[RMDB]
Background: Structure probing data (DMS) for a 177-nucleotide construct. The reactions ran in a buffer of 150 mM KOAc, 10 mM MgCl2 and 150 mM bicine (pH 8.5), at 24 C.
RNA sequence: GGGAACGACUCGAGUAGAGUCGAAAAUAUCAAGCAGUUACUGUUCAACUUCCCCAAGGAUGCCAAGACUUCCAACGGUGAACCAUUUUGGUCCGGUGCUAAGCGUGCUCCAACACCAUUAGAGUUAUGGAUUAGCUGGAUUCGUCCAGCUAAUCCAAAAAGAAACAACAACAACAAC
Reactivity to DMS in 0.01 (KOAc 150mM, MgCl2 10mM, bicine 150mM(pH8.5), 24C), signal-to-noise 1, nucleotides 027 to 126: u000a110u000c140a120a190g030c070a100g000u000u000a110c070u000g020u030u000c070a040a220c050u020u000c010c000c050c100a050a160g030g000a030u020g040c040c030a050a180g030a100c050u000u000c120c030a030a070c170g010g000u010g000a030a130c030c080a140u020u000u000u020g000g000u000c130c080g010g010u010g020c030u000a080a050g000c070g020u000g000c060u000c020c070a030a060c110a050c030c010a100u020u030a070g000a040g090u030u000a080